RNA sequence: GGGAACGACUCGAGUAGAGUCGAAAAAGUACCGCGUUAACGACUGUCACUUAGAACUGGAUCGCAGUGAAGCCUGCCUGGGGUGGAUCAGCUAAACUUUUACAGGAUCGCGCUUUUCGUCCCGCCCGCUGGGCUGUAAAGCGUUAAAUCAAUAAGCCCUAAUGGUUUAGUUCGCUAAACCAUUAGGAAAAGAAACAACAACAACAAC
Reactivity to DMS in 0.01 (KOAc 150mM, MgCl2 10mM, bicine 150mM(pH8.5), 24C), signal-to-noise 1, nucleotides 027 to 156: a090g060u000a070c040c020g020c100g000u010u000a070a110c020g030a030c010u020g040u000c020a060c060u000u000a110g000a100a120c060u000g020g000a040u000c070g000c100a060g040u000g020a150a080g000c030c010u000g050c030c060u000g000g040g040g000u000g010g000a100u000c020a110g000c060u000a050a050a080c060u000u000u010u010a060c090a100g030g000a060u000c070g030c000g060c010u010u000u010u000c080g010u000c020c000c000g070c060c020c040g040c060u000g010g020g000c040u000g030u010a010a040a020g000c030g030u000u000a040a030a090u010c050a090a070u000a070a110g000c160
Reactivity to 2A3 in 0.01 (KOAc 150mM, MgCl2 10mM, bicine 150mM(pH8.5), 24C), signal-to-noise 4, nucleotides 027 to 156: a000g080u070a050c010c010g070c050g060u060u100a160a020c060g050a050c030u030g000u090c030a030c080u050u130a060g040a200a040c020u040g060g030a090u060c050g000c040a020g000u020g050a020a010g010c000c020u020g000c010c010u030g010g000g010g010u030g020g020a050u050c020a020g050c060u080a030a090a110c080u100u070u150u250a060c040a030g050g010a040u040c030g000c000g000c010u020u000u020u020c030g040u080c010c020c000g010c030c040c020g110c100u070g000g000g000c010u030g030u030a010a010a000g010c000g010u030u070a020a030a020u060c040a010a090u080a160a050g010c010
Structure probing data (DMS and 2A3) for a 207-nucleotide construct. Reactivities are given for positions 27 through 156. In probing experiments dimethyl sulfate is read out at A N1 and C N3, which are open when not base-paired. For 2A3 the reverse transcriptase was SuperScript II with manganese. The reactions ran in a buffer of 150 mM KOAc, 10 mM MgCl2 and 150 mM bicine (pH 8.5), at 24 C. DMS adducts were read by reverse transcription with MarathonRT.